[RMDB]
RNA sequence: GGGAACGACUCGAGUAGAGUCGAAAAGCCUGCUUGAUGCGGGCAAUUGAUGACAGAAAAGCUACCCUAGGGAUAACAGAGUCGUCACUCGCAAGAGCACAUAUCGACCGAGUGGCUUGCUACCUCGAUGUCGGUUCCCUCCAUCCUGCCCGUGCAGCUUUAAUAUAAGGUUCGCCUUAUAUUAAAGAAAAGAAACAACAACAACAAC
Reactivity to DMS in 0.01 (KOAc 150mM, MgCl2 10mM, bicine 150mM(pH8.5), 24C), signal-to-noise 4, nucleotides 027 to 156: g010c000c000u010g020c020u000u010g010a150u010g050c000g030g020g020c010a000a030u000u000g020a110u010g020a150c030a140g010a120a070a070a080g000c010u000a030c010c000c010u010a120g020g040g010a100u000a040a080c030a130g000a120g020u000c040g020u010c060a060c010u000c020g000c090a070a300g000a090g010c040a120c160a130u010a140u000c020g010a140c090c020g000a070g010u000g010g010c010u010u000g000c020u000a070c080c020u000c000g010a060u010g020u010c030g020g020u000u000c010c000c010u000c070c050a050u010c040c020u000g010c000c040c080g020u000g000c040a180g000
Reactivity to 2A3 in 0.01 (KOAc 150mM, MgCl2 10mM, bicine 150mM(pH8.5), 24C), signal-to-noise 9, nucleotides 027 to 156: g040c000c010u010g010c030u070u220g200a150u300g010c030g000g000g000c020a000a010u050u030g060a050u090g020a020c050a060g160a090a160a020a020g030c040u060a080c010c010c040u100a130g060g040g040a070u100a180a060c040a090g080a050g110u040c020g010u020c020a000c010u000c000g000c030a050a010g010a010g070c100a040c030a210u220a040u080c020g020a020c010c000g010a000g010u010g010g000c010u020u070g010c010u020a040c040c030u000c000g020a030u260g000u000c010g030g000u030u000c000c000c000u010c010c000a040u050c000c010u020g020c030c050c090g110u150g030c010a010g000